[RMDB]
Source information:
Structure probing data (2A3 and DMS) for a 177-nucleotide construct. The DMS profile rests on 652 reads. The reactions ran in a buffer of 150 mM KOAc, 10 mM MgCl2 and 150 mM bicine (pH 8.5), at 24 C.

RNA sequence: GGGAACGACUCGAGUAGAGUCGAAAAAAGACUGAGACAGUCCGCACUAUGUGGAAAGCCACCAGCAACGAAACGCAAAACAUCAAGGCAAUCCUUGCCCGGGCAACAGGCAGCGUGGCUUUCACCGUGUGAUACACCAGUUCGCUGGUGUAUCACAAAAAGAAACAACAACAACAAC
Reactivity to 2A3 in 0.01 (KOAc 150mM, MgCl2 10mM, bicine 150mM(pH8.5), 24C), signal-to-noise 1, nucleotides 027 to 126: a000a000g020a010c060u060g020a020g060a190c040a050g060u000c020c020g040c020a070c060u100a080u300g070u190g070g000a030a010a010g000c000c000a000c000c000a010g000c050a050a080c080g080a150a050a000c070g030c090a000a060a020a110c020a120u080c070a050a030g010g000c010a040a100u160c040c090u030u040g020c020c000c000g090g080g050c080a100a070c020a110g040g010c030a030g030c030g060u010g020g130c040u010u000u020c020a030c000c000g030
Reactivity to DMS in 0.01 (KOAc 150mM, MgCl2 10mM, bicine 150mM(pH8.5), 24C), signal-to-noise 1, nucleotides 027 to 126: a090a040g000a030c000u000g000a160g030a190c110a010g000u000c040c030g060c030a020c110u000a050u000g000u000g030g000a030a000a020g000c010c060a010c020c020a240g040c030a050a050c090g030a030a040a050c180g000c050a020a020a020a050c150a170u000c130a030a040g050g000c100a100a120u020c120c180u000u000g010c030c000c090g010g010g000c160a030a040c050a080g000g010c090a040g000c190g050u000g000g000c000u000u000u000c000a080c000c220g020